[RMDB]
RNA sequence: GGGAACGACUCGAGUAGAGUCGAAAACAGGCGUGAGCCACCACACCCAGCCCAGGACUAAGCACCUUAGAUUUAUGACCACAAGCCUCAAGUGGACCCAGGCAGAGCCAGCCUUCCUUGGGAAUUCAAUUGAUCGAUUAUUCGUAAUCGAUCAAUUAAAAGAAACAACAACAACAAC
Reactivity to DMS in 0.01 (KOAc 150mM, MgCl2 10mM, bicine 150mM(pH8.5), 24C), signal-to-noise 7, nucleotides 027 to 126: c180a090g000g010c030g030u010g010a140g020c030c020a070c050c030a050c070a080c020c020c020a130g000c030c020c030a090g010g010a080c070u000a090a110g000c060a060c060c050u010u000a060g000a100u000u000u010a070u010g000a130c020c020a050c060a070a090g010c030c030u000c070a080a100g020u000g000g000a100c030c020c030a050g000g020c060a050g010a110g020c030c030a060g010c030c040u000u000c040c010u000u000g010g010g010a100a080u000u010c080
Reactivity to 2A3 in 0.01 (KOAc 150mM, MgCl2 10mM, bicine 150mM(pH8.5), 24C), signal-to-noise 2, nucleotides 027 to 126: c000a020g040g000c010g030u100g040a020g010c010c000a010c010c000a030c010a010c010c010c010a010g000c000c000c000a010g010g020a030c040u050a050a020g020c040a070c020c010u050u050a050g020a210u100u170u070a140u180g060a050c000c020a020c040a110a030g040c010c010u070c060a130a000g010u040g070g030a040c030c010c010a000g020g000c010a010g020a000g080c000c020a010g000c000c010u020u020c000c000u040u040g050g020g000a050a060u160u090c020